[RMDB]
RNA sequence: GGGAACGACUCGAGUAGAGUCGAAAAGAUAUGGAGCGAACUACAAGGAACCGGUUCGUUGAAAACAAAGGCAAGUCGGAAACGACUUGCCUUUGUUGGAGAACCUCAGUACUUGCGCUCCUAAGUCCUAUCUAAGAUGCUUCGGCAUCUUAGAUAGAAAAGAAACAACAACAACAAC
Reactivity to DMS in 0.01 (KOAc 150mM, MgCl2 10mM, bicine 150mM(pH8.5), 24C), signal-to-noise 3, nucleotides 027 to 126: g000a140u000a300u000g000g010a050g000c000g000a120a040c160u000a300c010a010a030g000g020a170a190c300c300g000g000u020u010c000g000u020u020g010a230a150a020a000c000a010a000a010g000g000c000a010a040g000u000c000g010g000a170a130a210c010g010a020c000u000u000g000c010c000u020u000u000g010u010u000g000g000a030g000a000a000c010c010u000c050a080g000u010a130c010u000u000g000c010g010c000u000c000c000u000a020a050g010u000c060